[RMDB]
RNA sequence: GGGAACGACUCGAGUAGAGUCGAAAAAGAUGUACAACGUGUUACUGCGCAAGUAUUAGUAGAGAAAGAGCGUGUUACAAGAAGUUCAACAGGAGAUUCUCAAGACUAUUUAUCUAAUAAAACAGCUUUUGAAGUAGUUAGAGUAUGGACAGAAACACGUCUUGUAGACGUUCGCGUCUACAAGACGAAAAGAAACAACAACAACAAC
Reactivity to 2A3 in 0.01 (KOAc 150mM, MgCl2 10mM, bicine 150mM(pH8.5), 24C), signal-to-noise 3, nucleotides 027 to 156: a000g070a030u070g020u060a070c030a080a020c110g050u040g030u140u040a050c050u040g010c040g000c050a050a020g000u010a030u110u050a020g030u020a020g040a010g090a160a070a010g050a040g010c010g010u050g040u080u030a050c020a020a020g100a030a020g060u050u060c040a050a020c010a080g030g030a050g030a060u060u010c070u010c050a020a080g020a080c020u010a030u030u110u020a080u070c030u060a090a060u100a110a160a040a040c050a060g040c020u020u090u120u140g040a040a020g010u020a000g000u030u030a020g000a040g060u060a050u130g020g010a000c010a020g060a060a040a010c070a000
Reactivity to DMS in 0.01 (KOAc 150mM, MgCl2 10mM, bicine 150mM(pH8.5), 24C), signal-to-noise 1, nucleotides 027 to 156: a000g040a090u000g030u000a040c040a130a010c050g000u020g000u010u000a090c010u010g000c070g060c110a030a060g020u000a050u000u010a030g050u000a140g020a100g000a010a070a060g000a130g020c040g050u010g000u020u030a050c090a050a100g000a040a090g010u000u040c020a050a080c040a120g000g020a120g000a170u000u000c050u000c050a050a150g000a200c040u000a040u000u000u000a090u010c000u000a090a060u000a020a010a070a190c030a070g020c130u000u020u000u060g080a050a050g020u000a050g010u000u000a040g000a050g010u000a070u000g000g000a150c040a080g040a020a070a060c060a140